[RMDB]
RNA sequence: GGGAACGACUCGAGUAGAGUCGAAAAUCGGAUCCUAGGUACCAUACUAGCAUGCAUGACUAGUAGCAGGUACCAUGACUAGGCGUACGUGCUAGUCGUACCAUGAGUACCGUAGGAUCCUAGGACCAUCGUUGUCACCAUUCGUGGUGACAACGAUAAAAGAAACAACAACAACAAC
Reactivity to 2A3 in 0.01 (KOAc 150mM, MgCl2 10mM, bicine 150mM(pH8.5), 24C), signal-to-noise 2, nucleotides 027 to 126: u080c010g010g040a010u010c010c000u010a020g000g020u000a000c000c010a030u010a080c000u000a000g010c010a050u140g060c040a070u090g090a190c020u000a000g010u020a050g080c160a110g020g100u060a040c030c000a010u030g010a000c010u000a000g050g040c020g100u190a080c030g050u150g130c000u010a030g010u030c060g000u050a070c020c030a050u090g020a030g060u020a030c030c070g150u030a000g000g000a000u000c000c010u010a030g000g060a000c020c000
Reactivity to DMS in 0.01 (KOAc 150mM, MgCl2 10mM, bicine 150mM(pH8.5), 24C), signal-to-noise 3, nucleotides 027 to 126: u000c200g010g000a020u000c000c000u000a070g010g010u000a030c020c030a160u000a050c000u010a020g010c000a070u000g010c190a050u000g000a050c000u000a000g020u000a040g000c200a120g010g020u000a020c110c300a030u020g000a010c020u010a020g000g000c020g020u010a050c130g010u000g000c000u000a010g010u010c180g040u010a050c150c110a080u000g000a130g010u010a000c010c010g020u000a020g000g000a020u000c000c010u000a020g000g010a190c050c020

The record gives the reactivity of an RNA of 177 nucleotides to 2A3 and DMS. For DMS the reverse transcriptase was MarathonRT. The reactions ran in a buffer of 150 mM KOAc, 10 mM MgCl2 and 150 mM bicine (pH 8.5), at 24 C.